[RMDB]
RNA sequence: GGGAACGACUCGAGUAGAGUCGAAAAGAUAUGGAACAUGGCAAGGGAGCUCGAAGUGUCGGAAACGACAUCAAGAGCGAGGAUCUUGCCCGCUGUUCCUAAGUCAAAAGGCAACUUCGGUUGCCAACAUCAUACCAGACUUCGGUCUGGUAUGAUGAAAAGAAACAACAACAACAAC
Reactivity to 2A3 in 0.01 (KOAc 150mM, MgCl2 10mM, bicine 150mM(pH8.5), 24C), signal-to-noise 2, nucleotides 027 to 126: g020a000u060a040u180g010g000a000a000c000a010u150g010g000c000a000a010g040g000g000a010g020c010u000c030g100a220a040g010u010g000u010c000g010g010a060a050a060c010g000a000c000a010u090c040a090a000g000a000g010c000g020a030g020g000a000u000c000u000u000g000c020c010c000g010c000u010g000u000u000c000c000u000a070a010g040u000c020a000a010a060a210g010g000c000a000a000c010u090u210c300g160g000u010u010g010c000c000a000a000